Annotation: An RNA of 207 nucleotides, treated with 2A3 and read out base by base. 2A3 adducts were read by reverse transcription with SuperScript II with manganese. It was measured as part of the RMDB library VIROID.
RNA sequence: GGGAACGACUCGAGUAGAGUCGAAAAGUUCUUCUUCGACUCGGACCGGCUCAUCUCGACAAGAGGCGGCAGUCCUCAGUGCUCUUACUCUUUUCUGUAAAGAGGAGACUGCUGGACUCGCCGCCCGAGUUCGAGCAUGGGCCAAUUCCGGGCGAAGCCCUGCCUAAUAGUUCGCUAUUAGGCAGGGAAAAGAAACAACAACAACAAC
Reactivity to 2A3 in 0.01 (KOAc 150mM, MgCl2 10mM, bicine 150mM(pH8.5), 24C), signal-to-noise 5, nucleotides 027 to 156: g010u020u010c000u050u000c030u000u000c020g190a220c030u000c000g000g020a010c050c050g000g000c000u010c010a000u000c000u020c000g000a000c020a060a050g110a220g070g000c010g010g000c000a000g010u000c010c000u000c000a060g020u160g220c020u010c030u110u300a300c000u030c000u070u110u130u100c200u240g300u300a020a010a000g010a010g000g010a000g000a000c000u010g090c070u020g000g000a000c000u030c090g000c000c000g000c010c000c000g000a000g000u080u010c010g000a000g000c020a010u010g000g020g010c000c000a000a000u010u000c010c000g000g010g000c000g000a000a000g010